[RMDB]
RNA sequence: GGGAACGACUCGAGUAGAGUCGAAAAUCCUUCCUUUUCGAAGGAAGGACAGAGCACAGUCUUCGCAUCUGUGAAUCACACAACAGCCGUGUCUAUGCGAGGUUUUAAUCAAGUUCGCUUGAUUAAAUUAACCAUUAUAAUUCGUUAUAAUGGUUAAAAAAGAAACAACAACAACAAC
Reactivity to DMS in 0.01 (KOAc 150mM, MgCl2 10mM, bicine 150mM(pH8.5), 24C), signal-to-noise 9, nucleotides 027 to 126: u000c000c000u000u000c000c000u000u010u000u020c150g010a030a000g010g010a010a010g000g000a010c100a050g010a130g010c020a020c020a020g010u000c060u010u000c020g010c020a030u000c020u000g010u010g000a090a100u010c070a120c120a080c110a070a080c160a110g010c070c050g010u000g010u010c150u010a020u000g010c010g010a030g000g000u010u000u000u000a000a010u000c000a000a010g010u000u010c190g010c000u000u000g000a010u000u000a000a010a070
Reactivity to 2A3 in 0.01 (KOAc 150mM, MgCl2 10mM, bicine 150mM(pH8.5), 24C), signal-to-noise 5, nucleotides 027 to 126: u000c000c000u000u010c010c000u050u050u040u100c230g110a010a000g000g000a000a010g000g000a010c030a030g110a010g030c010a010c000a030g020u010c040u070u030c090g000c010a020u000c010u020g020u010g090a130a140u120c030a030c010a010c020a110a190c030a090g160c050c050g090u070g030u050c040u060a020u030g000c000g010a020g010g030u040u090u000u030a000a010u010c000a000a010g020u040u070c170g050c080u000u000g000a000u000u020a000a000a020